[RMDB]
RNA sequence: GGGAACGACUCGAGUAGAGUCGAAAAAAGAGUGCGACGAGCUGGCCGUCAACUUCUGCUACGUCAACAGCAAGGGCGCCCGCAAACGCAUGGCGCGGGCGCUGUUUGAUGCGCCGGAGGGGGCGCCAAUUUCCCAACAUUUCGAUGUUGGGAAAUUAAAAGAAACAACAACAACAAC
Reactivity to 2A3 in 0.01 (KOAc 150mM, MgCl2 10mM, bicine 150mM(pH8.5), 24C), signal-to-noise 1, nucleotides 027 to 126: a000a020g100a020g030u090g010c020g040a060c000g000a060g050c020u030g050g000c060c030g050u020c010a020a020c020u070u010c010u020g000c000u060a020c030g050u060c020a020a030c020a080g120c030a090a070g150g090g050c050g000c000c060c020g050c050a110a170a040c100g010c190a130u150g050g030c080g000c040g040g000g000c000g000c010u000g000u000u020u030g000a010u030g050c010g020c040c050g000g010a020g040g040g000g030g030c010g000c010c000
Reactivity to DMS in 0.01 (KOAc 150mM, MgCl2 10mM, bicine 150mM(pH8.5), 24C), signal-to-noise 5, nucleotides 027 to 126: a070a080g000a080g020u000g010c060g010a100c090g000a130g000c090u010g020g010c070c010g010u000c030a030a050c050u010u010c030u010g000c030u010a160c100g010u010c060a040a050c040a070g030c140a120a190g010g000g010c040g020c000c010c100g010c030a060a110a090c120g020c110a070u010g000g020c210g020c000g000g000g010c100g020c000u000g010u000u000u010g010a050u000g000c300g010c030c030g020g000a050g000g010g000g010g010c030g000c030c060
The record gives the reactivity of an RNA of 177 nucleotides to 2A3 and DMS. For DMS the reverse transcriptase was MarathonRT. For 2A3 the reverse transcriptase was SuperScript II with manganese. Values cover nucleotides 27 to 126. The 2A3 profile rests on 1,460 reads. The RNA was probed in 150 mM KOAc, 10 mM MgCl2 and 150 mM bicine (pH 8.5) at 24 C. For DMS, 4,134 sequencing reads were counted.